[RMDB]
The record gives the reactivity of an RNA of 177 nucleotides to 2A3 and DMS. Reactivities are given for positions 27 through 126. For DMS, 4,320 sequencing reads were counted. The reactions ran in a buffer of 150 mM KOAc, 10 mM MgCl2 and 150 mM bicine (pH 8.5), at 24 C. Values are in units of 0.01, from 0 to 300, in steps of 10.
RNA sequence: GGGAACGACUCGAGUAGAGUCGAAAAAUGGACAGCUCCAGCUGCCUGGUGGAUGAUACCAACAGCGGCGGCUCGUCCACGGACAAGCUGAGGGCGUUGGCCGCCGCGGCGGCGGAGACGGCGCCGCCUGUACUUUGUGGUUCGCCACAAAGUACAGAAAAGAAACAACAACAACAAC
Reactivity to 2A3 in 0.01 (KOAc 150mM, MgCl2 10mM, bicine 150mM(pH8.5), 24C), signal-to-noise 3, nucleotides 027 to 126: a010u170g000g010a030c030a040g010c010u000c040c020a080g010c010u020g030c010c020u030g040g030u020g070g110a200u190g020a050u160a140c010c000a040a060c030a050g000c000g000g000c010g010g000c020u030c010g000u000c000c000a000c020g000g000a050c120a250a160g070c040u030g020a110g020g030g000c050g030u110u170g040g000c060c060g060c030c010g000c010g010g000c000g010g000c000g000g010a020g030a000c010g030g060c100g020c020c010g000c010
Reactivity to DMS in 0.01 (KOAc 150mM, MgCl2 10mM, bicine 150mM(pH8.5), 24C), signal-to-noise 4, nucleotides 027 to 126: a070u000g010g010a070c040a160g010c010u000c040c030a150g030c030u010g010c020c030u020g020g040u000g000g030a130u010g000a160u020a180c000c010a040a110c210a210g010c020g010g000c050g010g000c020u000c040g020u000c000c000a030c030g020g000a290c200a110a140g000c020u000g000a070g000g010g000c020g010u010u000g010g010c010c010g010c000c010g000c010g010g020c010g010g000c010g010g000a060g000a040c060g020g010c070g000c000c020g010c080